RNA sequence: GGGAACGACUCGAGUAGAGUCGAAAACGCCCGUCACGUCAUGGGAGCCGAGGGUGCCCGAAGCCGCCACGAUUCAGUGGUGUCCACGGCAAGAUCGGUGACUGGGACGAAGUCGUAACAAGGUAGCAUUCACAUGAGGCUUCGGCCUCAUGUGAAUAAAAGAAACAACAACAACAAC
Reactivity to DMS in 0.01 (KOAc 150mM, MgCl2 10mM, bicine 150mM(pH8.5), 24C), signal-to-noise 1, nucleotides 027 to 126: c220g000c000c000c000g050u000c070a180c020g000u010c000a130u150g000g000g000a220g000c000c000g030a070g000g000g000u040g080c000c000c100g000a120a300g050c040c020g000c000c020a010c000g030a140u000u030c070a090g020u000g020g000u000g000u000c000c020a300c300g000g000c030a000a040g050a100u010c000g020g000u000g000a100c000u000g000g030g000a080c020g000a050a050g070u000c120g000u000a050a110c300a070a110g000g000u000a130g000c110
Reactivity to 2A3 in 0.01 (KOAc 150mM, MgCl2 10mM, bicine 150mM(pH8.5), 24C), signal-to-noise 1, nucleotides 027 to 126: c120g020c050c000c000g000u040c000a020c050g010u070c020a110u040g000g000g000a000g000c000c000g040a010g000g000g090u110g000c000c000c000g000a020a000g000c000c000g020c000c040a000c020g030a070u270u120c010a050g010u000g030g000u000g010u000c030c000a000c000g000g000c000a050a000g010a010u020c000g000g000u040g010a000c000u010g000g060g020a000c010g010a060a070g110u030c060g090u170a120a030c020a210a050g080g070u030a000g180c050